[RMDB]
Background
The record gives the reactivity of an RNA of 177 nucleotides to 2A3. Values cover nucleotides 27 to 126. The RNA was probed in 150 mM KOAc, 10 mM MgCl2 and 150 mM bicine (pH 8.5) at 24 C. 2A3 is a SHAPE reagent: it acylates the 2'-hydroxyl of flexible nucleotides of all four kinds. The data come from the RNA Mapping Database (RMDB), library TTRDES.

RNA sequence: GGGAACGACUCGAGUAGAGUCGAAAAGAUAUGGACAUAUACUUCAACAGCAAUCCCAUCGGAAACGAUGGAAUUGACAUGAAGAUAUGUCCUAAGUCAAAUCCUUGGUCCUUCGGGACCAAGGAAAGACGUAUAGGUCCUUCGGGACCUAUACGUCAAAAGAAACAACAACAACAAC
Reactivity to 2A3 in 0.01 (KOAc 150mM, MgCl2 10mM, bicine 150mM(pH8.5), 24C), signal-to-noise 1, nucleotides 027 to 126: g010a020u020a020u140g010g000a010c010a030u070a050u120a300c040u050u000c130a300a280c160a300g010c010a010a010u080c000c000c000a020u020c000g020g000a000a000a020c000g000a040u000g000g030a000a000u000u010g060a080c090a300u250g000a000a000g000a040u000a000u000g010u080c000c000u020a000a000g000u000c010a000a050a180u000c000c000u000u000g000g030u040c040c000u080u100c300g120g000g000a000c010c050a020a000g000g010a010a010a050